[RMDB]
RNA sequence: GGGAACGACUCGAGUAGAGUCGAAAAAAACCGUAACGGCAUAUGCAAAUUGGAAACUGUCCUGUCUUGGGGCCCACCCACCCGACGCGUCAUAUGCAAAUGAAAAUCGGUCCCCCGAGGCCACGUGCUGUAGGUUGCGUUUCGACGCAACCUACAGAAAAGAAACAACAACAACAAC
Reactivity to 2A3 in 0.01 (KOAc 150mM, MgCl2 10mM, bicine 150mM(pH8.5), 24C), signal-to-noise 1, nucleotides 027 to 126: a000a000a000c080c020g050u070a120a000c120g100g000c000a000u020a000u090g040c090a050a100a130u070u130g130g070a140a000a000c090u070g120u080c020c000u060g070u160c160u120u220g040g000g000g000c000c080c000a050c000c020c020a020c000c040c000g070a080c000g000c090g050u000c000a000u000a000u120g000c010a000a080a130u110g000a050a000a000a100u200c040g000g000u030c010c000c000c000c000g060a020g000g020c040c060a110c040g000u040g070